[RMDB]
RNA sequence: GGGAACGACUCGAGUAGAGUCGAAAAUGAUUGCUGAGUGUUCACCUGGACCUUCUGACUACCUUCCCUGUGCUAUUCCAUCAGCCUACAGACCUGGUACCUGGAUUUUUGCCCGAGAUGAUUCCUAUACACACCAAAAGUUCGCUUUUGGUGUGUAAAAAGAAACAACAACAACAAC
Reactivity to DMS in 0.01 (KOAc 150mM, MgCl2 10mM, bicine 150mM(pH8.5), 24C), signal-to-noise 6, nucleotides 027 to 126: u020g010a100u000u000g010c030u000g000a080g010u010g000u010u000c040a080c060c040u000g010g000a080c040c040u000u010c030u010g000a110c060u000a100c060c050u000u000c020c020c010u000g010u010g030c030u000a070u020u000c040c050a040u010c040a080g000c030c020u000a070c100a110g010a080c060c020u000g000g010u010a040c040c020u010g000g000a060u000u000u010u010u010g000c020c010c020g020a070g010a060u010g010a180u000u000c000c000u010a260
Reactivity to 2A3 in 0.01 (KOAc 150mM, MgCl2 10mM, bicine 150mM(pH8.5), 24C), signal-to-noise 4, nucleotides 027 to 126: u190g020a070u060u110g020c040u050g020a030g040u070g040u060u050c030a050c070c000u010g020g020a050c000c010u070u040c050u050g100a090c010u060a100c000c030u020u040c000c000c000u010g030u040g010c000u080a080u130u080c010c010a050u020c050a060g030c000c010u060a050c020a030g030a090c000c020u010g030g020u030a050c030c010u030g100g000a130u090u030u020u080u080g040c030c000c000g030a050g000a040u100g030a030u020u010c000c000u040a050